An RNA of 177 nucleotides, treated with 2A3 and DMS and read out base by base.
The DMS profile rests on 2,838 reads.
Reactivities are rounded to 0.1 and cut off at 0 and 3.
It was measured as part of the RMDB library OK2TST.
RNA sequence: GGGAACGACUCGAGUAGAGUCGAAAAUCGACAGAUAGGUCAUGACAUUGGAGGCCGUGCCGCCGGGGCAGCAGCCAACGAGAAUCACACCCGCCGCGACCUCCGGCGACAUGGGAAUGAUUCGGGACUAAUAGCACCCAUUCGUGGGUGCUAUUAGAAAAGAAACAACAACAACAAC
Reactivity to 2A3 in 0.01 (KOAc 150mM, MgCl2 10mM, bicine 150mM(pH8.5), 24C), signal-to-noise 2, nucleotides 027 to 126: u050c000g000a000c010a010g110a100u170a060g000g080u040c010a020u130g030a030c040a090u060u110g110g040a030g050g070c000c020g020u020g020c030c000g030c030c000g020g030g000g060c010a030g000c000a020g020c000c020a040a060c060g070a050g070a180a080u170c030a040c000a030c120c000c020g010c060c010g010c000g020a030c000c010u000c010c020g000g000c000g010a010c010a000u020g020g000g090a110a060u050g020a020u100u080c000g010g040g040a020
Reactivity to DMS in 0.01 (KOAc 150mM, MgCl2 10mM, bicine 150mM(pH8.5), 24C), signal-to-noise 4, nucleotides 027 to 126: u000c060g000a130c140a110g010a090u000a080g000g010u000c020a060u000g020a090c120a070u000u000g010g020a090g000g010c020c010g030u010g010c030c020g000c020c020g020g030g010g020c160a180g040c040a080g000c040c150a060a110c150g010a140g010a080a100u000c120a060c170a110c070c030c120g020c020c070g000c020g000a090c260c010u010c010c020g020g000c010g040a010c030a030u000g000g000g010a090a060u010g000a110u010u000c030g000g000g000a300